[RMDB]
RNA sequence: GGGAACGACUCGAGUAGAGUCGAAAAGUAUGGAGCUAGCGAUUUUAUAGUCGGUGCACGAGCUGUCGACAUGUUUUUUUUCAUGCGAGUACCGACAUAUACAGCUCGUACGCUAGCGAACAUACGAGGGUUGCAGUUCCUUCGGGAGCUGCAACCCAAAAGAAACAACAACAACAAC
Reactivity to 2A3 in 0.01 (KOAc 150mM, MgCl2 10mM, bicine 150mM(pH8.5), 24C), signal-to-noise 2, nucleotides 027 to 126: g000u000a000u010g010g000a020g010c000u000a000g010c000g080a110u000u020u060u180a300u180a090g000u000c010g020g010u010g000c000a020c090g000a030g000c000u000g010u000c000g040a130c010a010u000g030u000u000u010u040u040u000u160u140c000a000u000g000c010g000a000g000u000a000c000c000g000a030c000a030u200a000u010a000c000a010g000c000u010c050g000u020a040c030g000c000u000a000g000c010g030a060a030c000a010u000a000c000g010a090
Chemical mapping of a 177-nucleotide RNA with 2A3. The reactions ran in a buffer of 150 mM KOAc, 10 mM MgCl2 and 150 mM bicine (pH 8.5), at 24 C. Reactivities are given for positions 27 through 126. Source: RMDB library OK1LIB, as collected in RNAgym.